[RMDB]
RNA sequence: GGGAACGACUCGAGUAGAGUCGAAAAGAUAUGGAUCAGAACUACGACGAAGUGAGCGUUGAAAUCGGAAACGAUGGAGCUCACUAGUCGCUGAUCCUAAGUCAAAAUCGUGAGUUCGCUCACGAAACACGUAUGGUACGUUCGCGUACCAUACGUGAAAAGAAACAACAACAACAAC
Reactivity to 2A3 in 0.01 (KOAc 150mM, MgCl2 10mM, bicine 150mM(pH8.5), 24C), signal-to-noise 3, nucleotides 027 to 126: g070a020u070a040u180g000g000a000u000c020a010g070a160a100c190u230a080c300g020a000c020g030a190a020g030u000g010a000g000c040g150u300u070g000a020a060a020u000c020g020g000a060a050a050c010g000a010u020g030g030a030g020c010u000c010a000c000u000a000g000u000c000g020c010u000g010a000u000c010c000u030a130a010g020u030c030a050a020a010a300u040c010g000u000g000a000g000u060u200c300g000c090u000c000a010c010g010a030a010a000
Reactivity to DMS in 0.01 (KOAc 150mM, MgCl2 10mM, bicine 150mM(pH8.5), 24C), signal-to-noise 3, nucleotides 027 to 126: g000a020u010a300u010g010g030a010u000c000a010g000a160a070c070u010a300c020g000a020c010g000a130a140g000u000g010a000g010c030g000u010u000g000a050a100a000u000c010g000g000a130a040a160c000g020a040u000g000g040a140g010c000u000c000a000c000u000a120g000u000c000g000c000u000g000a010u000c000c000u000a020a030g020u010c020a060a040a120a110u000c010g010u000g020a000g000u000u000c240g030c000u000c000a000c010g000a030a100a160